[RMDB]
RNA sequence: GGGAACGACUCGAGUAGAGUCGAAAAGAUAUGGACCGUUGUGAGACAUGACGAAGAAGGGUCGGAAACGACCCGUACCGUCAACAGCUCACACCGGUCCUAAGUCAAACUUCGAGUUCGCUCGAAGCUUAAAGGGUUCCUUCGGGAACCCUUUAAGAAAAGAAACAACAACAACAAC
Reactivity to DMS in 0.01 (KOAc 150mM, MgCl2 10mM, bicine 150mM(pH8.5), 24C), signal-to-noise 2, nucleotides 027 to 126: g020a000u010a300u010g010g000a000c000c000g030u010u010g030u020g010a000g000a040c130a300u000g010a010c020g000a040a090g020a210a300g010g000g010u000c000g000g000a070a100a290c000g020a010c000c000c010g000u010a090c300c000g000u010c000a020a050c300a180g000c000u000c000a000c010a000c110c000g020g010u000c000c000u000a020a050g010u000c020a100a070a250c010u000u000c010g030a000g010u000u000c280g000c000u000c010g000a020a020g000
Structure probing data (DMS) for a 177-nucleotide construct. Source: RMDB library TTRDES, as collected in RNAgym. Values cover nucleotides 27 to 126. The RNA was probed in 150 mM KOAc, 10 mM MgCl2 and 150 mM bicine (pH 8.5) at 24 C.